Structure probing data (DMS and 2A3) for a 177-nucleotide construct. Reactivities are rounded to 0.1 and cut off at 0 and 3. The RNA was probed in 150 mM KOAc, 10 mM MgCl2 and 150 mM bicine (pH 8.5) at 24 C. 2A3 adducts were read by reverse transcription with SuperScript II with manganese.
RNA sequence: GGGAACGACUCGAGUAGAGUCGAAAACACAGGGACCGAGGCACGCGCUCGAGCUUGUAGAUCUCGUUGAUGUAGGUCAUCAUCUGGGCGAUGGCGGUGUUGAACCUGAGAUGCUCGGUGUCCUCUGACGCGGCAACAUAUUCGUAUGUUGCCGCGUAAAAGAAACAACAACAACAAC
Reactivity to DMS in 0.01 (KOAc 150mM, MgCl2 10mM, bicine 150mM(pH8.5), 24C), signal-to-noise 1, nucleotides 027 to 126: c080a160c100a090g000g000g000a090c000c020g010a080g030g000c040a140c050g010c050g000c020u020c010g000a040g010c060u000u020g010u000a220g000a030u000c010u000c030g020u030u000g000a100u000g000u010a040g000g000u000c010a200u000c010a000u000c020u000g000g000g010c010g000a100u000g040g020c100g020g010u000g000u010u020g000a100a050c040c000u000g010a140g000a140u000g010c010u000c000g010g000u020g010u010c030c020u020c110u000g000
Reactivity to 2A3 in 0.01 (KOAc 150mM, MgCl2 10mM, bicine 150mM(pH8.5), 24C), signal-to-noise 1, nucleotides 027 to 126: c030a000c020a020g000g050g000a000c000c000g030a020g040g000c040a000c060g060c020g010c000u020c040g080a010g000c060u060u000g050u060a090g000a060u000c030u040c040g100u090u300g130a170u220g040u200a020g000g010u010c010a000u000c000a000u000c030u030g000g020g040c020g050a080u100g020g140c160g160g000u020g060u080u140g050a040a060c000c010u010g040a080g010a120u070g000c000u000c020g040g000u030g080u080c000c040u000c110u060g050